[RMDB]
RNA sequence: GGGAACGACUCGAGUAGAGUCGAAAAGAUAUGGACCGGACACAGUUGUCAGCUCUGGCUAAUCCUUCCAUCGGAAACGAUGGAAAGGACAACCAGAGCUUGGAUUUACUGUGUCCGGUCCUAAGUCCGUCCAAUAUACGUUCGCGUAUAUUGGACGAAAAGAAACAACAACAACAAC
Reactivity to DMS in 0.01 (KOAc 150mM, MgCl2 10mM, bicine 150mM(pH8.5), 24C), signal-to-noise 2, nucleotides 027 to 126: g010a080u000a300u000g000g010a060c030c000g020g010a020c000a000c000a020g040u000u000g000u000c020a050g010c000u020c000u030g020g030c040u030a180a300u000c000c000u000u010c000c000a000u000c000g030g000a190a120a260c010g000a020u000g000g010a000a020a010g000g030a030c110a180a150c020c000a020g000a010g030c000u000u020g030g010a010u000u010u010a000c020u000g010u000g010u000c050c000g000g020u030c000c000u000a010a110g020u000c010
Chemical mapping of a 177-nucleotide RNA with DMS. For DMS the reverse transcriptase was MarathonRT. The RNA was probed in 150 mM KOAc, 10 mM MgCl2 and 150 mM bicine (pH 8.5) at 24 C. For DMS, 1,995 sequencing reads were counted.